Source information: This 207-nucleotide RNA was probed chemically with 2A3 and DMS. DMS adducts were read by reverse transcription with MarathonRT. Values cover nucleotides 27 to 156. The 2A3 profile rests on 5,221 reads.

RNA sequence: GGGAACGACUCGAGUAGAGUCGAAAACCUGUUAUCUGACCAAUAACAGAAUGCACCACAGCGUAAAAUCAUCUGAUUGGGUGAGUUGGUCGCACCGCCAUUUGACGAACGAACGGCAAGCCUAAGCACUACGAGUAUGUGUUCGCACAUACUCGAACCUUAUCAUCUCCUUCGGGAGAUGAUAAGGAAAAGAAACAACAACAACAAC
Reactivity to 2A3 in 0.01 (KOAc 150mM, MgCl2 10mM, bicine 150mM(pH8.5), 24C), signal-to-noise 6, nucleotides 027 to 156: c000c000u000g010u010u000a010u000c010u010g010a010c010c000a010a010u020a000a000c000a010g080a080a080u160g020c050a060c050c030a050c060a050g060c020g080u130a050a070a060a090u080c050a040u030c060u100g080a150u090u160g090g000g000u020g010a030g000u010u030g030g000u010c010g000c030a010c010c010g040c020c020a060u070u070u090g070a050c050g030a190a000c020g010a040a010c030g030g000c030a040a030g000c010c020u070a060a020g040c050a050c150u170a040c060g000a000g000u000a000u000g010u000g010u010u070c090g030c090a000c000a000u000a000c000u000c000g000a000a000
Reactivity to DMS in 0.01 (KOAc 150mM, MgCl2 10mM, bicine 150mM(pH8.5), 24C), signal-to-noise 2, nucleotides 027 to 156: c050c010u000g000u000u000a000u000c010u000g030a050c090c110a300a030u010a010a050c000a040g030a160a190u000g000c030a100c010c050a090c030a070g030c100g070u020a070a040a120a150u010c040a110u000c000u010g000a090u010u010g020g070g000u000g000a300g000u000u000g040g030u000c020g000c020a060c030c010g030c000c030a170u010u000u000g040a080c060g000a100a170c020g000a060a090c050g010g010c010a030a250g000c030c010u000a070a150g020c000a110c020u000a100c020g020a020g020u000a000u000g000u000g020u000u020c300g060c000a010c020a010u000a000c000u000c000g000a020a040